[RMDB]
RNA sequence: GGGAACGACUCGAGUAGAGUCGAAAAAAACUCAACAGGACAUAGUUGAGGAAGAGCCCAUGCUGAAGCGAGCGCGCUUCGAGGAGACGGACCUCGUUGAUCACCGUCACAUCUUCCUCGCGGACUCCACGUUCAAGGGUUUCGACCCUUGAACGUGAAAAGAAACAACAACAACAAC
Reactivity to DMS in 0.01 (KOAc 150mM, MgCl2 10mM, bicine 150mM(pH8.5), 24C), signal-to-noise 2, nucleotides 027 to 126: a050a050a050c020u000c010a010a040c000a140g010g020a110c170a060u000a110g000u000u000g000a010g000g000a090a070g000a140g000c040c030c040a130u020g010c090u000g000a040a030g010c010g010a240g050c290g000c050g010c000u000u000c050g000a080g000g020a200g000a010c040g010g000a130c040c010u000c080g000u010u000g000a100u000c130a110c010c030g000u000c010a130c240a130u000c050u000u000c000c000u000c050g020c070g000g000a210c170u000c030
Reactivity to 2A3 in 0.01 (KOAc 150mM, MgCl2 10mM, bicine 150mM(pH8.5), 24C), signal-to-noise 1, nucleotides 027 to 126: a040a010a010c010u000c020a020a000c000a070g060g220a040c020a150u170a080g030u080u080g050a020g000g000a030a010g010a000g010c000c060c020a000u140g060c070u150g030a010a000g000c040g040a020g170c190g070c000g010c130u000u000c020g010a040g010g000a070g010a010c040g060g040a120c000c020u010c090g140u130u150g000a090u130c010a000c000c000g000u060c020a020c000a010u010c000u090u000c000c010u010c010g010c030g000g040a020c000u000c050
Conditions: 150 mM KOAc, 10 mM MgCl2 and 150 mM bicine (pH 8.5), 24 C.
The record gives the reactivity of an RNA of 177 nucleotides to DMS and 2A3.
DMS adducts were read by reverse transcription with MarathonRT.
Values cover nucleotides 27 to 126.